[RMDB]
RNA sequence: GGGAACGACUCGAGUAGAGUCGAAAAUGCAUACUGCGCCACCUGCGCGAAACACGUCGUUGCCACCAAGGUGGCCAAGCACAGUAAGAGCAGCACCUUGAGAGUGGCCAUUGUCGGCAGCGUAAACCCACCUAUGGUCAUUCGUGACCAUAGGUGGAAAAGAAACAACAACAACAAC
Reactivity to 2A3 in 0.01 (KOAc 150mM, MgCl2 10mM, bicine 150mM(pH8.5), 24C), signal-to-noise 5, nucleotides 027 to 126: u110g020c020a060u060a190c050u130g000c010g030c030c040a130c010c040u100g000c050g010c030g070a120a100a000c110a030c070g060u070c030g030u050u070g010c000c000a000c000c010a020a000g020g010u040g090g080c000c020a030a020g030c010a010c010a080g190u300a200a060g030a020g080c000a000g020c010a030c030c020u040u040g080a110g030a020g190u030g040g040c010c000a060u050u150g050u030c020g000g030c030a030g000c010g040u040a050a060a070c020
Reactivity to DMS in 0.01 (KOAc 150mM, MgCl2 10mM, bicine 150mM(pH8.5), 24C), signal-to-noise 2, nucleotides 027 to 126: u040g010c060a190u030a040c070u040g050c050g030c040c050a060c090c020u000g040c010g000c000g000a130a120a110c250a090c050g000u030c050g000u040u000g040c000c000a110c080c020a010a020g030g000u000g000g040c000c080a090a090g020c060a210c070a180g020u070a050a150g000a250g040c010a030g000c050a000c020c000u020u000g020a240g030a040g000u010g020g010c020c040a050u060u000g000u000c090g000g020c030a090g010c050g020u000a000a080a120c080
Source information:
This 177-nucleotide RNA was probed chemically with 2A3 and DMS. The RNA was probed in 150 mM KOAc, 10 mM MgCl2 and 150 mM bicine (pH 8.5) at 24 C.